RNA sequence: GGGAACGACUCGAGUAGAGUCGAAAAUGUGACACGUGGACUCCGUUUAACCCUGUUAGUGGUGUAGGAGCAAUUGCAGUCGGCACUUCAGAUGAGGAACCUACACUUCCUGCCAUUAAAUAUGCGCUAAUAUCCAGUACUUCGGUACUGGAUAUUAAAAAGAAACAACAACAACAAC
Reactivity to 2A3 in 0.01 (KOAc 150mM, MgCl2 10mM, bicine 150mM(pH8.5), 24C), signal-to-noise 3, nucleotides 027 to 126: u110g020u030g030a010c000a000c130g020u070g060g060a060c010u020c020c000g000u020u060u100a080a050c060c000c000u030g110u240u130a090g000u080g110g010u010g010u010a020g030g000a010g000c000a000a030u090u050g000c020a010g050u070c050g030g010c020a010c000u070u080c040a070g020a290u110g030a040g060g020a020a020c000c010u030a030c040a020c040u030u010c000c010u020g000c000c000a040u060u070a100a150a080u230a050u090g020c070g010c050
Reactivity to DMS in 0.01 (KOAc 150mM, MgCl2 10mM, bicine 150mM(pH8.5), 24C), signal-to-noise 8, nucleotides 027 to 126: u000g010u000g010a080c060a080c110g010u010g000g000a130c030u000c020c020g000u000u000u010a170a100c030c010c020u010g010u010u010a090g030u010g000g010u000g010u000a170g010g000a090g010c060a070a080u010u010g010c060a110g010u000c060g010g010c030a080c070u010u010c080a100g000a100u010g000a110g000g000a090a100c040c020u010a050c080a040c110u000u000c070c020u000g010c040c020a040u000u010a040a090a110u010a040u010g010c120g010c090
Structure probing data (2A3 and DMS) for a 177-nucleotide construct. The RNA was probed in 150 mM KOAc, 10 mM MgCl2 and 150 mM bicine (pH 8.5) at 24 C. For 2A3, 3,650 sequencing reads were counted.